Record summary
Conditions: 150 mM KOAc, 10 mM MgCl2 and 150 mM bicine (pH 8.5), 24 C. An RNA of 207 nucleotides, treated with 2A3 and DMS and read out base by base. For 2A3, 13,794 sequencing reads were counted. Values cover nucleotides 27 to 156. It was measured as part of the RMDB library RNAMAK.
RNA sequence: GGGAACGACUCGAGUAGAGUCGAAAAUCACGUUAUUCGUAACGUGAAAAAAAGCGUACUACGACGACUAGAACUACGUUCGAUAAGUCCCAAAUAGGACUUUUGACGAACGCUAGUGAACGUCGUAUCGCAAAAAAGCACUUGUUCGCAAGUGCAAUACCAUAUAUCGAUUCGUCGAUAUAUGGUAAAAAGAAACAACAACAACAAC
Reactivity to 2A3 in 0.01 (KOAc 150mM, MgCl2 10mM, bicine 150mM(pH8.5), 24C), signal-to-noise 9, nucleotides 027 to 156: u040c000a000c000g000u000u020a030u080u100c160g030u030a000a010c000g000u030g070a130a010a000a000a000a000a010g050c050g030u110a090c060u000a000c020g000a000c000g050a050c070u100a070g040a140a030c030u050a020c090g000u010u000c000g010a030u010a090a000g000u020c000c010c020a190a300a120u300a090g000g000a010c000u060u060u080u170g180a100c010g000a000a000c000g020c020u000a000g000u010g040a090a010c010g010u000c000g000u000a000u020c010g010c010a100a100a020a010a020a000g000c000a000c000u010u020g020u120u150c220g030c150a000a000g000u000g000c000a000a000
Reactivity to DMS in 0.01 (KOAc 150mM, MgCl2 10mM, bicine 150mM(pH8.5), 24C), signal-to-noise 6, nucleotides 027 to 156: u000c000a000c010g020u000u000a030u000u000c300g050u000a010a000c010g020u000g000a000a000a050a080a060a090a160g010c020g030u000a090c110u010a010c000g010a010c010g030a210c110u000a170g010a300a080c010u000a020c010g030u000u000c000g020a160u010a030a010g020u000c010c000c010a070a140a260u000a030g010g000a030c000u000u010u000u010g020a260c130g000a010a010c000g010c040u010a030g010u010g010a100a090c030g010u000c000g010u000a020u000c020g000c010a010a040a070a070a110a170g010c000a000c000u000u000g010u010u000c300g030c010a000a020g020u000g010c010a060a060